Chemical mapping of a 177-nucleotide RNA with DMS and 2A3. The data come from the RNA Mapping Database (RMDB), library M2PK50.
[RMDB]
RNA sequence: GGGAACGACUCGAGUAGAGUCGAAAACACAGAAUCUUCGGAUUCUGUGAAAGGAUCAAAAACAUGCAAAAGUUCCAAAAAGCAUGAAGGACAAAAGUCCAAAAACACAUCGCUUCGGCGAUGUGAAGCUUCUCUUAAUGUUCGCAUUAAGAGAAGCAAAAGAAACAACAACAACAAC
Reactivity to DMS in 0.01 (KOAc 150mM, MgCl2 10mM, bicine 150mM(pH8.5), 24C), signal-to-noise 2, nucleotides 027 to 126: c010a030c000a000g000a010a010u000c000u000u000c190g010g020a040u000u000c000u010g010u000g000a030a050a080g020g020a110u010c120a070a080a030a100a140c000a000u010g000c020a060a040a060a060g000u000u020c000c040a060a060a100a180a170g000c000a000u000g010a170a160g010g010a020c000a060a080a130a120g020u000c000c000a080a060a020a120a180c020a010c010a000u000c000g030c010u000u000c130g020g000c000g010a000u000g000u000g010a050a110
Reactivity to 2A3 in 0.01 (KOAc 150mM, MgCl2 10mM, bicine 150mM(pH8.5), 24C), signal-to-noise 2, nucleotides 027 to 126: c000a000c000a000g000a020a000u010c010u030u080c160g180g010a010u000u000c000u000g000u000g000a000a000a000g040g000a040u080c090a010a120a050a030a120c000a000u010g000c000a140a060a010a050g040u070u030c010c000a090a020a010a080a000g000c000a000u010g040a120a140g020g000a030c050a050a300a050a050g000u030c000c000a060a060a000a010a000c000a010c000a000u000c010g000c000u020u090c230g110g000c000g000a010u000g000u000g000a000a010